This 177-nucleotide RNA was probed chemically with DMS and 2A3. It was measured as part of the RMDB library OK1LIB. For 2A3 the reverse transcriptase was SuperScript II with manganese. Values are in units of 0.01, from 0 to 300, in steps of 10. The 2A3 profile rests on 2,586 reads.
RNA sequence: GGGAACGACUCGAGUAGAGUCGAAAACGUGAACAUCGCUCUGCUAAGUCCCGUCGUUCUUCCAGUCAGAGCGAGAUUGUAAGCAACCUUAUGCGCAAUGAAGACAUAGAGGGACUUCUCAAUCAAGAUGGGAUAGUAGGUUCGCCUACUAUCCCAUAAAAGAAACAACAACAACAAC
Reactivity to DMS in 0.01 (KOAc 150mM, MgCl2 10mM, bicine 150mM(pH8.5), 24C), signal-to-noise 3, nucleotides 027 to 126: c170g000u000g000a140a150c180a180u000c000g000c000u010c010u000g010c130u000a090a050g020u030c040c020c010g030u000c030g000u000u010c010u000u020c010c130a040g040u050c010a040g000a020g000c020g000a010g000a010u010u010g010u010a080a090g000c070a080a120c070c080u010u010a030u010g000c050g010c090a120a090u040g030a100a130g010a060c040a040u010a100g000a040g030g000g010a080c060u000u000c100u010c090a060a080u020c120a130a070g000
Reactivity to 2A3 in 0.01 (KOAc 150mM, MgCl2 10mM, bicine 150mM(pH8.5), 24C), signal-to-noise 4, nucleotides 027 to 126: c080g100u110g060a090a010c050a110u040c000g000c000u020c000u000g020c010u020a050a020g060u060c040c050c040g050u040c000g020u030u000c000u120u010c010c000a030g020u080c030a000g000a010g040c010g010a000g000a030u000u000g010u070a050a060g000c030a070a070c030c000u010u050a050u080g060c100g000c080a100a120u300g030a170a050g020a040c000a030u090a020g150a050g040g000g000a020c000u040u020c030u010c010a110a120u020c040a070a060g030
The reactions ran in a buffer of 150 mM KOAc, 10 mM MgCl2 and 150 mM bicine (pH 8.5), at 24 C.